RNA sequence: GGGAACGACUCGAGUAGAGUCGAAAAAAGCAAUGGUGAAAGGCUUCCUCGAAGUGUCAGGAGCAAGGUGAUUUAUGAGAUUGUCAAACUUGUUGACAGUACGGAAAUGGCCAUCUUGCAACAGCUGGCUUUCUCUUACAUCUUAGACCCAAACCACGAGACCUAUCUGGUUCGCCAGAUAGGUCUCAAAAGAAACAACAACAACAAC
Reactivity to 2A3 in 0.01 (KOAc 150mM, MgCl2 10mM, bicine 150mM(pH8.5), 24C), signal-to-noise 2, nucleotides 027 to 156: a000a000g070c060a040a010u040g080g000u050g030a120a040a020g030g000c000u110u000c010c060u020c060g070a110a040g050u080g060u070c030a000g000g040a040g040c030a010a020g010g000u030g020a090u010u170u050a060u130g120a180g020a070u030u000g020u000c020a000a020a200c210u190u160g020u040u040g060a070c010a000g000u060a020c040g020g030a060a150a170u090g010g000c000c010a010u020c010u000u080g010c050a040a050c000a050g100c020u030g000g060c000u080u050u000c020u010c000u090u050a050c030a090u090c000u040u000a120g030a100c000c000c080a080a020a070c070c110a120c170
Structure probing data (2A3) for a 207-nucleotide construct. Source: RMDB library OK3TST, as collected in RNAgym. Reactivities are rounded to 0.1 and cut off at 0 and 3. The RNA was probed in 150 mM KOAc, 10 mM MgCl2 and 150 mM bicine (pH 8.5) at 24 C.